[RMDB]
RNA sequence: GGGAACGACUCGAGUAGAGUCGAAAACACUUAUAUUUGGACCUAAUUUGCGUGAUCCUGCUUCUGAAACACUAUCUAUACAAGCAAUUUCUAGGGCAUUCAAUGGAGAUUUUGAAUCUUUGAGUAAAUGCAAUAAUGCAUUCGUGCAUUAUUGCAUAAAAGAAACAACAACAACAAC
Reactivity to 2A3 in 0.01 (KOAc 150mM, MgCl2 10mM, bicine 150mM(pH8.5), 24C), signal-to-noise 2, nucleotides 027 to 126: c030a020c060u230u130a140u120a120u300u090u110g060g030a030c000c000u090a100a140u060u080u110g040c040g030u040g050a050u040c010c010u050g040c030u090u010c020u110g050a040a070a020c050a010c070u070a060u080c050u000a120u030a200c030a090a010g030c010a030a090u000u100u000c010u060a020g000g040g000c020a030u100u110c020a010a100u090g060g010a050g010a090u020u120u140u190g100a070a060u000c040u070u030u050g070a070g040u130a040a190
Reactivity to DMS in 0.01 (KOAc 150mM, MgCl2 10mM, bicine 150mM(pH8.5), 24C), signal-to-noise 4, nucleotides 027 to 126: c080a080c120u020u010a100u020a090u000u000u010g000g010a120c040c040u020a030a060u010u000u000g010c040g010u000g000a060u000c030c040u000g020c030u000u010c070u020g010a100a090a070c080a040c050u000a050u000c040u010a110u000a080c150a050a090g010c030a050a060u000u000u000c050u010a070g010g010g020c050a060u010u010c080a040a060u000g010g000a090g000a080u000u010u010u010g010a070a100u010c000u000u000u010g020a110g020u000a050a090
About this RNA: Chemical mapping of a 177-nucleotide RNA with 2A3 and DMS. For DMS the reverse transcriptase was MarathonRT. The DMS profile rests on 2,856 reads. Reactivities are given for positions 27 through 126. Source: RMDB library OK2TRN, as collected in RNAgym. For 2A3, 2,107 sequencing reads were counted.